[RMDB]
Source: RMDB library OK2TRN, as collected in RNAgym. The record gives the reactivity of an RNA of 177 nucleotides to 2A3 and DMS. DMS adducts were read by reverse transcription with MarathonRT. 2A3 adducts were read by reverse transcription with SuperScript II with manganese.
RNA sequence: GGGAACGACUCGAGUAGAGUCGAAAAAUAACCUGAUAGGUAUGCUUCAAACUAUCGCGGAUGGUAAAGCGCACUUCACCGAGACGAUUAAGCCUGUUCUUGACCUUACUAACUCAAUAGUAUAUCGCUUAACCGUAUUUUUCGAAAUACGGUUAAGAAAAGAAACAACAACAACAAC
Reactivity to 2A3 in 0.01 (KOAc 150mM, MgCl2 10mM, bicine 150mM(pH8.5), 24C), signal-to-noise 5, nucleotides 027 to 126: a000u060a030a060c010c000u020g030a050u060a070g020g040u090a030u120g070c050u060u110c070a110a120a060c030u040a030u050c030g010c060g160g030a060u070g010g040u090a040a020a070g020c030g010c030a010c030u060u050c030a020c040c020g020a020g030a050c040g030a060u110u070a050a010g030c010c020u050g030u090u050c020u050u070g070a100c020c000u020u030a030c010u040a090a030c020u020c140a030a070u010a020g050u020a050u030a040u080c040g000
Reactivity to DMS in 0.01 (KOAc 150mM, MgCl2 10mM, bicine 150mM(pH8.5), 24C), signal-to-noise 7, nucleotides 027 to 126: a080u010a090a120c020c010u010g010a070u010a030g010g010u000a050u000g020c070u000u010c120a090a090a090c050u000a020u000c040g020c120g010g010a090u010g000g020u000a050a070a070g000c060g010c090a070c050u000u000c050a060c040c020g000a160g020a080c060g010a060u010u000a060a110g010c020c030u000g010u000u000c030u000u000g010a090c080c070u000u000a030c030u000a030a070c170u010c260a070a050u010a040g010u000a040u000a060u010c100g010
For DMS, 8,123 sequencing reads were counted. Conditions: 150 mM KOAc, 10 mM MgCl2 and 150 mM bicine (pH 8.5), 24 C. For 2A3, 7,379 sequencing reads were counted.